[RMDB]
RNA sequence: GGGAACGACUCGAGUAGAGUCGAAAAUCACAUGCUGCAAGGUGACGCCAUAGCGGGAUUUGAGUAGGUCAGCAGACCAGCGCAAGUAGCUAUUAAUCUCUUGGCUGCCACCCCAAGCAUGGAAAUAGGUCCAGUAAUCGUUCGCGAUUACUGGACCAAAAGAAACAACAACAACAAC
Reactivity to 2A3 in 0.01 (KOAc 150mM, MgCl2 10mM, bicine 150mM(pH8.5), 24C), signal-to-noise 1, nucleotides 027 to 126: u060c010a050c000a160u010g040c000u010g050c050a010a000g020g010u010g030a010c010g060c030c000a020u070a090g110c110g000g000g030a040u060u000u040g060a070g070u180a090g060g010u010c000a040g120c080a010g110a030c010c000a070g000c040g000c070a150a110g100u120a000g190c000u040a030u080u100a050a030u020c000u020c020u020u040g000g000c060u120g000c010c030a020c030c010c000c000a010a010g000c010a000u000g020g030a000a010a020u190a040
Reactivity to DMS in 0.01 (KOAc 150mM, MgCl2 10mM, bicine 150mM(pH8.5), 24C), signal-to-noise 1, nucleotides 027 to 126: u020c030a200c010a000u000g000c000u000g000c300a140a300g000g000u000g010a030c000g000c000c040a030u000a010g040c210g000g000g000a050u000u000u000g020a070g000u000a230g040g040u000c000a070g000c300a050g000a050c060c020a300g010c080g000c080a150a080g050u000a060g030c010u050a070u000u000a040a050u000c030u030c060u000u000g000g000c040u000g000c030c020a050c000c000c000c060a300a010g000c000a000u000g020g030a030a200a110u000a230